Structure probing data (2A3 and DMS) for a 177-nucleotide construct. Reactivities are rounded to 0.1 and cut off at 0 and 3. 2A3 is a SHAPE reagent: it acylates the 2'-hydroxyl of flexible nucleotides of all four kinds.
RNA sequence: GGGAACGACUCGAGUAGAGUCGAAAACUGGCGAGCAGCGUCACAAUUGCCAGCACAAUACCAAGACUUAACAUCCAUUUAUGACGUUUAUACAGUGCCAGAUAGGGUAGCAAAGCGCGCAUUUAAACCUAAUAGCGGAGUUCGCUCCGCUAUUAGGAAAAGAAACAACAACAACAAC
Reactivity to 2A3 in 0.01 (KOAc 150mM, MgCl2 10mM, bicine 150mM(pH8.5), 24C), signal-to-noise 2, nucleotides 027 to 126: c000u010g030g000c020g000a020g000c060a010g000c010g030u020c020a000c040a060a100u050u110g020c000c000a010g020c070a020c030a050a100u110a080c030c000a050a040g080a070c050u100u070a060a040c010a060u030c050c000a080u060u070u090a100u170g020a010c010g020u020u040u000a030u040a020c020a030g030u000g060c000c010a010g040a090u100a050g080g020g060u030a020g010c020a050a060a010g010c020g000c000g020c040a000u010u130u240a060a030a010
Reactivity to DMS in 0.01 (KOAc 150mM, MgCl2 10mM, bicine 150mM(pH8.5), 24C), signal-to-noise 4, nucleotides 027 to 126: c030u000g010g020c020g000a070g020c110a100g010c030g000u000c050a040c100a080a100u010u000g010c030c020a040g000c080a040c110a090a080u000a140c060c030a090a070g010a090c100u000u010a060a090c090a090u000c020c060a120u000u010u020a060u030g020a060c030g020u000u000u000a090u010a070c120a050g000u000g000c050c030a040g000a080u000a060g000g000g000u000a050g010c050a040a080a080g000c060g010c090g020c070a060u000u000u000a060a090a160